The record gives the reactivity of an RNA of 207 nucleotides to 2A3.
2A3 adducts were read by reverse transcription with SuperScript II with manganese.
It was measured as part of the RMDB library RNAMAK.

[RMDB]
RNA sequence: GGGAACGACUCGAGUAGAGUCGAAAACCCCUUGAGUUCGCUCAAGGGGAAAAAACCUUUGUGUAGCAACAGAACUACCAGCGAUUGAGUCCCAUUGGGACUUAGAGCUGGCUGUUGCACACACUCUGGUAAAAAUCUCUGUGUUCGCACAGAGAAAGUAACAGAAACGUUUCGACGUUUCUGUUACAAAAGAAACAACAACAACAAC
Reactivity to 2A3 in 0.01 (KOAc 150mM, MgCl2 10mM, bicine 150mM(pH8.5), 24C), signal-to-noise 2, nucleotides 027 to 156: c000c000c000c000u000u000g010a010g000u040u110c250g070c110u020c050a000a030g010g010g030g000a030a000a000a000a070a160c000c020u000u030u030g000u020g020u000a070g010c000a000a010c000a000g030a120a040c060u090a050c220c000a000g010c000g120a190u150u080g020a060g020u030c010c040c070a180u300u300g020g000g000a000c020u090u160a050g000a010g050c000u000g020g000c000u000g000u000u000g000c000a000c000a000c000a000c010u120c050u060g000g060u130a060a060a110a150a150u040c000u000c000u000g020u000g030u040u100c300g020c040a000c020a000g010a010g010a000a010a010